[RMDB]
RNA sequence: GGGAACGACUCGAGUAGAGUCGAAAAAUAAGGUUGCUUGUGGGAUUUAUCUUGGGGUGUUGGAUAACCACGAAAAGAAAACAAUACCUACUAAACAUGUAGAUUCUUAAGAAGCUCAAGCUUUUGGACUGGGGUUCAACUCCCCACAGCUCCACCAUCAAGUGUGUAUGUUCGCAUACACACUUGAAAAAGAAACAACAACAACAAC
Reactivity to 2A3 in 0.01 (KOAc 150mM, MgCl2 10mM, bicine 150mM(pH8.5), 24C), signal-to-noise 2, nucleotides 027 to 156: a010u120a030a030g050g000u030u020g000c040u010u020g000u080g010g080g030a120u120u150u080a120u280c090u020u060g010g000g010g000u000g010u020u000g020g000a040u060a120a180c020c030a020c110g020a040a100a020a050g020a000a110a040a020c070a020a060u050a140c000c020u060a000c000u050a010a180a080c040a050u060g000u010a040g020a060u050u070c050u070u120a100a100g030a050a000g050c010u040c300a090a190g000c010u080u080u120u110g050g010a010c020u050g010g000g010g000u010u020c010a010a010c010u030c030c000c010c000a010c010a000g010c020u000c020c010a060c020c000a040
Reactivity to DMS in 0.01 (KOAc 150mM, MgCl2 10mM, bicine 150mM(pH8.5), 24C), signal-to-noise 1, nucleotides 027 to 156: a170u000a170a110g040g010u000u010g040c020u000u010g010u000g000g010g010a080u000u010u010a050u000c070u000u040g030g040g020g000u000g040u010u000g010g030a010u000a100a200c050c050a030c070g010a160a030a060a100g000a120a210a120a070c050a080a040u000a080c040c030u000a160c100u000a150a130a140c190a130u000g010u000a030g000a040u000u000c160u000u000a160a090g040a030a080g010c030u000c120a060a150g000c080u000u000u000u030g040g000a090c140u000g030g000g020g000u000u000c040a010a060c000u000c000c000c030c000a010c080a040g030c100u000c010c000a000c030c040a240
Structure probing data (2A3 and DMS) for a 207-nucleotide construct. The reactions ran in a buffer of 150 mM KOAc, 10 mM MgCl2 and 150 mM bicine (pH 8.5), at 24 C. DMS adducts were read by reverse transcription with MarathonRT. Values are in units of 0.01, from 0 to 300, in steps of 10. For 2A3 the reverse transcriptase was SuperScript II with manganese. The data come from the RNA Mapping Database (RMDB), library ARCHII.